[RMDB]
RNA sequence: GGGAACGACUCGAGUAGAGUCGAAAAGAGAGCUUCAAGUAGCUGUCGAUGACUGUUUGUCACUGAUAAAUGACACCCAAACUGAGUAUGAGAACAUUAUGGUAGUAUCAGUCAAGUAUGGUAUAGGUGUCUGAAACCAGUUCGCUGGUUUCAGACAAAAAGAAACAACAACAACAAC
Reactivity to DMS in 0.01 (KOAc 150mM, MgCl2 10mM, bicine 150mM(pH8.5), 24C), signal-to-noise 3, nucleotides 027 to 126: g000a070g010a050g010c020u010u000c150a110a150g020u000a030g020c030u000g000u000c020g010a140u010g000a060c030u000g000u010u010u010g030u010c030a060c060u000g010a050u010a070a110a120u000g000a030c040a060c050c000c030a070a130a090c050u000g010a130g000u020a050u010g000a190g000a070a080c060a060u010u000a040u010g010g010u000a110g020u000a040u000c080a060g000u010c080a070a090g040u000a050u000g010g000u000a070u000a080g010g010
Reactivity to 2A3 in 0.01 (KOAc 150mM, MgCl2 10mM, bicine 150mM(pH8.5), 24C), signal-to-noise 2, nucleotides 027 to 126: g040a010g020a010g010c060u110u070c090a130a120g100u090a000g190c010u010g110u130c000g050a020u050g000a010c030u030g150u140u050u170g030u000c000a010c050u060g090a030u080a040a100a050u050g030a020c010a030c020c000c000a040a060a030c010u020g030a020g090u120a070u120g060a050g010a170a010c020a090u140u250a070u260g060g030u060a020g010u090a040u040c030a000g070u010c010a070a020g080u050a110u150g090g100u070a120u040a210g040g110